[RMDB]
RNA sequence: GGGAACGACUCGAGUAGAGUCGAAAAGAUAUGGAAAUGGAUGCUUCACCUUCGUUGAAAUCGGAAACGAUGGAGAAGGUAGAGCUGCCCAUUUCCUAAGUCAAACAGAGUAGUUCGCUACUCUGAAGAUCAACUUAAACUUCGGUUUAAGUUGAUCAAAAGAAACAACAACAACAAC
Reactivity to DMS in 0.01 (KOAc 150mM, MgCl2 10mM, bicine 150mM(pH8.5), 24C), signal-to-noise 5, nucleotides 027 to 126: g010a040u000a300u000g000g000a000a000a010u000g020g010a300u000g000c000u000u000c040a020c000c000u000u000c020g010u000u010g010a110a100a020u000c010g000g000a110a100a150c000g000a020u000g010g000a100g020a020a000g010g010u000a020g000a010g000c000u000g020c180c010c000a010u000u000u000c000c000u000a020a060g010u000c040a130a100a250c020a020g000a020g020u000a010g040u000u010c210g010c010u000a000c000u000c010u000g000a090a090
Reactivity to 2A3 in 0.01 (KOAc 150mM, MgCl2 10mM, bicine 150mM(pH8.5), 24C), signal-to-noise 4, nucleotides 027 to 126: g010a020u060a030u130g000g000a010a000a000u010g000g020a010u030g000c000u080u070c010a010c000c010u000u020c040g290u280u050g020a030a030a010u010c010g010g010a060a070a060c010g000a000u010g000g000a030g000a000a000g010g000u020a030g000a000g000c020u080g040c020c000c000a000u000u000u010c000c000u020a070a010g040u020c030a050a050a080c000a010g010a000g000u010a000g020u050u110c300g010c110u000a010c000u000c000u010g010a050a020